[RMDB]
RNA sequence: GGGAACGACUCGAGUAGAGUCGAAAAGCACGGGUUCCUCCGGACGUGCGAACACUUGAGCGGCUAUUCCAGAGCUCUUGUGGAUUAGGACGUUCUACGACUUGAAGUCAACGUAGUUCGUCCGAAAGGCAUGCUUGUGGUUCGCCACGAGCAUGCCAAAAGAAACAACAACAACAAC
Reactivity to DMS in 0.01 (KOAc 150mM, MgCl2 10mM, bicine 150mM(pH8.5), 24C), signal-to-noise 2, nucleotides 027 to 126: g030c000a060c070g000g020g100u010u000c030c010u010c060c080g000g000a060c000g020u000g020c020g000a090a100c050a010c000u000u010g000a000g030c070g020g020c040u000a110u000u020c020c090a090g020a300g000c010u000c000u000u000g010u000g010g000a220u010u010a080g020g010a000c000g000u020u000c000u000a020c010g010a080c110u020u010g030a200a070g000u010c090a050a190c110g000u000a000g010u000u000c000g070u030c000c010g000a030a050a050
Reactivity to 2A3 in 0.01 (KOAc 150mM, MgCl2 10mM, bicine 150mM(pH8.5), 24C), signal-to-noise 3, nucleotides 027 to 126: g000c020a010c020g020g040g040u160u040c020c020u050c050c100g040g070a040c010g040u050g000c020g030a050a010c010a000c020u000u050g000a000g000c000g150g020c050u120a090u090u120c020c050a020g030a030g000c010u000c000u010u010g010u010g020g020a040u090u130a030g000g000a000c010g000u010u000c000u000a010c000g030a070c010u050u160g150a120a050g110u130c010a040a010c010g000u000a000g000u010u010c000g000u000c000c000g000a010a010a010